[RMDB]
RNA sequence: GGGAACGACUCGAGUAGAGUCGAAAAAUGGUGUUGCUCAACCAGAUCAAUAAAACCGGAACGACAGUAGUUAUGUCGACGCACAAUGCACGAGCGGUGAACGACAUGCGUCGACGCGUGAUCGAGCACGCGUAGUUCGGUUCGCCGAACUACGCGUAAAAGAAACAACAACAACAAC
Reactivity to 2A3 in 0.01 (KOAc 150mM, MgCl2 10mM, bicine 150mM(pH8.5), 24C), signal-to-noise 3, nucleotides 027 to 126: a010u090g010g000u020g020u000u050g020c020u000c010a000a000c020c010a050g050a110u160c090a080a110u100a260a080a010a030c030c050g020g040a060a020c020g110a060c070a060g180u180a010g010u220u100a090u180g020u000c010g010a000c000g040c010a010c010a060a270u240g020c030a010c070g060a110g150c150g050g070u080g000a070a030c050g080a000c060a050u040g020c000g000u010c010g000a000c000g000c010g030u060g020a040u160c120g010a020g010c000
Reactivity to DMS in 0.01 (KOAc 150mM, MgCl2 10mM, bicine 150mM(pH8.5), 24C), signal-to-noise 3, nucleotides 027 to 126: a130u010g000g000u010g000u000u010g010c030u010c020a300a030c010c040a010g030a140u000c120a080a110u000a030a020a050a120c030c030g000g010a090a080c060g030a080c030a100g010u020a060g020u010u000a110u000g010u000c010g000a040c010g010c010a060c090a210a090u020g000c040a040c040g010a140g000c100g000g020u010g000a090a070c100g010a130c190a080u000g000c090g010u000c030g010a020c030g040c140g040u000g010a040u010c130g020a000g010c050